Conditions: 150 mM KOAc, 10 mM MgCl2 and 150 mM bicine (pH 8.5), 24 C. An RNA of 177 nucleotides, treated with DMS and 2A3 and read out base by base. For DMS the reverse transcriptase was MarathonRT. It was measured as part of the RMDB libraries RFM100 and RFMREP.
RNA sequence: GGGAACGACUCGAGUAGAGUCGAAAAGUUACGCGCGGCAGGACGAAAAGACCCCGGGACCUUCACUAUAGCUUGGUAUUGGUGUUCGGUUCGGUUUGUGUAGGAUAGGUGGGAGACUGUGAAGCGGAUAAUGUCAGUAAUUCGUUACUGACAUUAUAAAAGAAACAACAACAACAAC
Reactivity to DMS in 0.01 (KOAc 150mM, MgCl2 10mM, bicine 150mM(pH8.5), 24C), signal-to-noise 9, nucleotides 027 to 126: g010u010u010a070c080g020c060g010c060g010g010c040a070g010g010a080c050g000a080a070a090a080g000a110c050c040c020c030g010g010g000a040c020c010u000u010c040a040c040u010a060u020a100g010c130u010u010g010g010u000a070u010u010g010g010u000g000u010u000c100g010g010u010u010c050g010g010u000u010u010g020u010g010u010a090g010g000a090u010a060g010g020u010g010g000g010a110g000a090c070u000g010u010g010a070a130g010c060g000g000
Reactivity to 2A3 in 0.01 (KOAc 150mM, MgCl2 10mM, bicine 150mM(pH8.5), 24C), signal-to-noise 9, nucleotides 027 to 126: g040u050u100a040c030g020c010g000c010g040g000c020a030g020g050a050c030g060a040a050a020a060g080a040c010c010c000c000g020g020g010a030c010c010u020u030c030a020c030u050a040u080a190g080c070u050u140g080g020u100a080u050u110g020g000u040g050u060u040c050g010g000u020u050c040g010g040u060u120u080g090u040g040u070a040g010g050a080u050a070g020g040u070g040g020g000a060g010a020c020u020g020u040g090a070a020g030c010g010g010